[RMDB]
RNA sequence: GGGAACGACUCGAGUAGAGUCGAAAAUGACAGCGUAGUAUGGCUGCCAACCGCACUGGCACGAAACAGCACACUGCCGUCCUGUACCACUGUCCCGGCAUGGACGCUAUCGCCUUCGCCUUUUUGCCGGAGGGGCACAAUUCGUUGUGCCCCUCCGAAAAGAAACAACAACAACAAC
Reactivity to 2A3 in 0.01 (KOAc 150mM, MgCl2 10mM, bicine 150mM(pH8.5), 24C), signal-to-noise 1, nucleotides 027 to 126: u090g030a000c010a000g040c060g000u010a020g090u040a230u150g090g000c040u000g060c030c000a040a070c010c030g110c050a030c090u070g030g000c010a000c100g030a040a110a040c050a060g020c040a040c010a000c060u040g050c000c010g070u000c030c030u100g030u150a160c000c030a050c020u070g100u010c030c000c000g060g050c040a080u120g010g050a040c010g000c030u110a080u160c020g010c030c000u030u030c000g050c040c040u040u180u030u090u120g090c090
Reactivity to DMS in 0.01 (KOAc 150mM, MgCl2 10mM, bicine 150mM(pH8.5), 24C), signal-to-noise 1, nucleotides 027 to 126: u010g000a040c030a050g000c010g000u000a060g020u000a070u000g000g000c010u000g010c010c040a070a130c050c130g030c110a130c070u010g010g030c030a110c110g020a070a060a180c130a050g010c030a060c070a050c090u000g040c060c030g000u000c020c000u000g020u010a060c040c060a060c170u010g020u000c030c020c030g000g010c010a060u000g020g000a070c080g000c150u000a010u000c030g010c020c070u000u000c120g000c070c040u000u000u000u000u000g020c260

Chemical mapping of a 177-nucleotide RNA with 2A3 and DMS.
For DMS the reverse transcriptase was MarathonRT.
The reactions ran in a buffer of 150 mM KOAc, 10 mM MgCl2 and 150 mM bicine (pH 8.5), at 24 C.
Reactivities are rounded to 0.1 and cut off at 0 and 3.
2A3 is a SHAPE reagent: it acylates the 2'-hydroxyl of flexible nucleotides of all four kinds.
It was measured as part of the RMDB library OK2TRN.